The record gives the reactivity of an RNA of 177 nucleotides to DMS and 2A3. Reactivities are given for positions 27 through 126.
RNA sequence: GGGAACGACUCGAGUAGAGUCGAAAAAGUAUCGGGUUCGCCCGAUACUAGAGCACCACUCCUGCGGGAGUUAAGGCCAAUCGCACAGGCGGGUGCAAAGCCAACUCAAGGGUUUCGACCCUUGAAAGAGAUACCCUAAGUUCGCUUAGGGUAUCUCAAAAGAAACAACAACAACAAC
Reactivity to DMS in 0.01 (KOAc 150mM, MgCl2 10mM, bicine 150mM(pH8.5), 24C), signal-to-noise 3, nucleotides 027 to 126: a030g020u000a020u000c000g010g010g010u000u010c250g030c000c020c000g010a000u010a000c000u000a040g010a170g010c030a030c010c010a090c010u000c000c000u000g030c160g040g000g000a030g020u000u000a070a140g000g020c010c020a130a110u010c130g010c120a110c130a080g010g010c070g020g010g030u000g000c010a060a050a110g010c040c050a070a170c150u000c010a020a000g000g010g000u000u000u000c170g010a040c000c010c010u000u000g000a000a160a080
Reactivity to 2A3 in 0.01 (KOAc 150mM, MgCl2 10mM, bicine 150mM(pH8.5), 24C), signal-to-noise 2, nucleotides 027 to 126: a010g000u000a000u010c010g010g030g040u050u050c170g060c020c000c000g000a000u010a000c000u000a010g000a030g000c020a010c000c010a050c000u020c000c010u040g000c260g040g010g000a010g020u020u200a050a020g110g000c000c010a030a070u120c090g030c130a070c030a110g000g060c030g030g000g000u000g000c000a000a040a020g030c010c010a040a040c030u010c030a000a000g020g010g010u000u100u130c160g110a030c000c000c000u000u000g000a010a010a010

For 2A3, 4,659 sequencing reads were counted. Source: RMDB library M2PK50, as collected in RNAgym. 2A3 adducts were read by reverse transcription with SuperScript II with manganese. For DMS the reverse transcriptase was MarathonRT.